[RMDB]
RNA sequence: GGGAACGACUCGAGUAGAGUCGAAAAUGAUUGGCGCAGGGGUACGGACCUCAGCUGAGUCAUGGGAGCUGAAUGUAUGUGUUUUGCCUCUGUCCUGCAUGUGGCAGGCUGUUGGCAUUCACAUACAAGCUGGCAUUGAGUUCGCUCAAUGCCAGCUAAAAGAAACAACAACAACAAC
Reactivity to 2A3 in 0.01 (KOAc 150mM, MgCl2 10mM, bicine 150mM(pH8.5), 24C), signal-to-noise 3, nucleotides 027 to 126: u180g030a040u010u070g010g000c010g010c120a050g000g000g000g040u030a030c130g080g160a050c000c010u050c010a000g000c000u040g050a000g020u030c030a030u050g000g000g000a060g030c040u100g050a110a060u060g030u020a000u000g050u000g030u010u000u020u040g010c000c000u010c000u010g220u300c000c000u020g030c000a060u240g060u060g300g000c000a000g000g000c000u050g010u260u010g010g000c010a000u000u000c020a000c000a000u000a000c000a000
Reactivity to DMS in 0.01 (KOAc 150mM, MgCl2 10mM, bicine 150mM(pH8.5), 24C), signal-to-noise 1, nucleotides 027 to 126: u000g010a100u000u000g000g020c080g040c130a050g000g000g000g000u000a150c230g090g000a110c050c060u030c060a150g040c000u000g020a020g020u030c000a000u000g000g000g000a150g020c100u020g060a110a120u010g000u010a000u000g020u000g000u000u000u040u000g030c000c000u000c000u000g000u020c000c000u000g000c000a100u050g030u010g000g010c010a000g000g010c000u000g000u060u000g000g010c000a000u010u030c000a000c000a020u000a000c000a000